[RMDB]
RNA sequence: GGGAACGACUCGAGUAGAGUCGAAAAAUAAAGGUGAAAUGAUGGAUUUAUCACGUGGUAGAGCCAUUAGCCGUGAAAAUGAAACGAGUCACUCAGCAUCUGCAACUGUAAUGAAAUCAUUGUUGAGAUGAAUUUCCCAAUUCGUUGGGAAAUUCAUAAAAGAAACAACAACAACAAC
Reactivity to 2A3 in 0.01 (KOAc 150mM, MgCl2 10mM, bicine 150mM(pH8.5), 24C), signal-to-noise 1, nucleotides 027 to 126: a000u300a090a060a010g180g020u070g070a090a040a000u120g000a010u010g000g070a030u070u050u060a180u180c050a040c130g080u050g000g030u010a020g000a000g010c060c150a040u060u130a000g000c000c000g030u060g010a030a040a000a110u090g050a080a040a140c150g000a070g120u090c000a000c050u000c080a000g000c020a160u090c030u030g000c000a010a040c000u010g000u180a080a030u070g060a080a050a020u040c030a030u060u030g060u010u090g060a130g000
Reactivity to DMS in 0.01 (KOAc 150mM, MgCl2 10mM, bicine 150mM(pH8.5), 24C), signal-to-noise 2, nucleotides 027 to 126: a100u020a110a120a060g030g020u040g010a090a070a030u000g000a040u000g040g000a150u000u000u000a000u000c020a070c260g020u000g010g000u000a010g000a090g020c030c060a050u020u010a130g000c100c030g020u020g000a070a050a030a090u000g000a100a090a120c110g000a060g000u010c050a050c130u000c140a070g020c010a040u000c030u010g000c010a030a010c040u000g020u010a020a050u000g000a160a110a020u010c030a040u000u000g000u000u000g010a060g010
Source: RMDB library OK2TRN, as collected in RNAgym. Chemical mapping of a 177-nucleotide RNA with 2A3 and DMS. The DMS profile rests on 1,095 reads. The reactions ran in a buffer of 150 mM KOAc, 10 mM MgCl2 and 150 mM bicine (pH 8.5), at 24 C.